[RMDB]
Chemical mapping of a 177-nucleotide RNA with DMS and 2A3.

RNA sequence: GGGAACGACUCGAGUAGAGUCGAAAACGCCGCUGACCAGUGUGUUGACCCACGUGCUGUUCUCGUACACCAGUGGGAUGAACGCCUCGUCCGUCUUGUUGUAGAGGAACGCGAAGGACUCACUGCCACAUCGCUAUUGUUUCGACAAUAGCGAUGUAAAAGAAACAACAACAACAAC
Reactivity to DMS in 0.01 (KOAc 150mM, MgCl2 10mM, bicine 150mM(pH8.5), 24C), signal-to-noise 4, nucleotides 027 to 126: c100g000c020c020g020c020u000g010a100c070c040a050g010u020g040u000g000u010u000g000a140c020c010c030a080c100g000u030g030c110u000g000u020u000c060u010c090g000u020a080c100a060c100c090a080g030u000g020g000g010a070u020g000a090a160c080g000c070c060u000c050g000u000c020c020g000u010c070u010u000g010u000u000g000u020a060g020a060g000g000a080a090c080g000c050g000a060a090g010g000a170c030u000c040a090c040u000g000c110c140
Reactivity to 2A3 in 0.01 (KOAc 150mM, MgCl2 10mM, bicine 150mM(pH8.5), 24C), signal-to-noise 6, nucleotides 027 to 126: c060g030c010c010g010c040u040g030a080c010c010a030g020u020g000u000g020u170u100g130a090c000c000c020a020c040g060u030g010c060u070g040u110u010c060u030c100g140u120a040c020a030c020c040a050g030u070g030g030g010a010u040g030a050a010c040g050c040c030u010c020g020u000c000c010g060u040c030u040u100g030u050u050g020u030a030g020a050g050g060a040a020c010g000c020g060a090a070g040g010a070c010u020c030a020c040u050g030c010c010
Record summary:
For DMS the reverse transcriptase was MarathonRT. Conditions: 150 mM KOAc, 10 mM MgCl2 and 150 mM bicine (pH 8.5), 24 C. It was measured as part of the RMDB library OK1LIB.